The record gives the reactivity of an RNA of 177 nucleotides to DMS and 2A3.

[RMDB]
RNA sequence: GGGAACGACUCGAGUAGAGUCGAAAAGAAGAGGCGUCUAAGCAGUCUUAUGCUAUUGCCACCAUCAAAGAAAUUGUUGGUGAGCGCCAACUAUUACUUGUGUGGGAGGCUGGCAAGUCCAAACCACGUCCUUUAAAAGGUUCGCCUUUUAAAGGACAAAAGAAACAACAACAACAAC
Reactivity to DMS in 0.01 (KOAc 150mM, MgCl2 10mM, bicine 150mM(pH8.5), 24C), signal-to-noise 2, nucleotides 027 to 126: g000a140a090g020a090g010g010c080g000u010c120u010a120a110g010c030a060g000u000c060u000u000a100u000g000c030u000a060u030u000g000c010c010a090c000c020a020u010c080a010a060a060g000a070a060a040u010u000g000u010u000g000g030u000g010a170g020c250g000c010c020a020a040c050u000a020u000u000a060c050u000u000g000u010g020u000g000g000g010a120g020g020c010u000g000g030c030a020a150g010u000c020c020a060a080a230c060c080a090c140
Reactivity to 2A3 in 0.01 (KOAc 150mM, MgCl2 10mM, bicine 150mM(pH8.5), 24C), signal-to-noise 2, nucleotides 027 to 126: g080a030a010g060a020g030g000c020g030u060c080u150a060a060g020c010a030g070u010c050u090u150a070u080g000c030u070a050u110u250g000c000c000a010c010c000a020u070c050a050a060a050g110a060a090a060u030u020g010u000u000g010g030u060g090a110g070c080g020c050c010a030a000c010u010a010u070u020a070c020u060u040g040u010g010u020g170g000g000a140g040g000c030u010g010g000c030a010a040g020u000c010c010a050a020a050c030c020a040c080
For DMS the reverse transcriptase was MarathonRT. It was measured as part of the RMDB library 15KREP. The reactions ran in a buffer of 150 mM KOAc, 10 mM MgCl2 and 150 mM bicine (pH 8.5), at 24 C. Values cover nucleotides 27 to 126. The DMS profile rests on 1,694 reads.